[RMDB]
RNA sequence: GGGAACGACUCGAGUAGAGUCGAAAAGUAAUAGAUAACUGGAUGCAGCGUAGGGAUCAACGCAUAUCCAGUACGAAUGGUACCUGUAAAUAAAAUAUGAUCCCUAGUACAAGUACCAACAGAAGGAUAAGCGAUGGUGAUGUCAAUCACAUUUGCAGUCAUGGCAGUAGUUCGCUACUGCCAUGACAAAAGAAACAACAACAACAAC
Reactivity to 2A3 in 0.01 (KOAc 150mM, MgCl2 10mM, bicine 150mM(pH8.5), 24C), signal-to-noise 1, nucleotides 027 to 156: g060u090a000a300u070a070g130a050u060a300a110c020u030g000g000a020u030g100c180a140g000c300g010u100a140g030g000g000a000u000c000a010a010c000g000c000a010u000a000u000c000c010a000g000u000a000c000g040a050a050u020g000g000u000a000c000c000u000g050u010a000a000a120u190a040a030a090a040u020a000u100g010a000u000c000c010c010u000a000g050u010a010c010a000a000g000u000a000c000c070a010a000c020a070g140a130a000g060g000a040u060a140a000g000c000g000a020u070g100g080u010g000a020u130g140u160c020a080a000u000c000a000c040a150u040u070u090g060c020a010